[RMDB]
RNA sequence: GGGAACGACUCGAGUAGAGUCGAAAAAAAAAGAUAUGGACCAUAGGGAGACCGCCCACUACCCACCUAUGGUCGGAAACGACCAUAGAGGUGGGUGGGUCGACGAUCUAUGGUCCUAAGUCAAAAACUUAUGAAACGUGUUCGCACGUUUCAUAAGAAAAGAAACAACAACAACAAC
Reactivity to DMS in 0.01 (KOAc 150mM, MgCl2 10mM, bicine 150mM(pH8.5), 24C), signal-to-noise 1, nucleotides 027 to 126: a050a100a080a100a130g010a040u000a300u000g010g020a010c000c000a050u000a000g010g000g000a040g000a010c000c030g000c000c000c000a000c020u000a150c030c010c010a300c130c000u000a000u000g010g000u010c000g010g010a080a120a160c000g000a040c010c000a000u020a000g040a070g020g020u000g040g000g010u000g000g000g020u000c040g000a050c230g000a020u020c010u000a010u000g010g020u010c000c000u000a000a060g010u010c060a110a050a070a110a150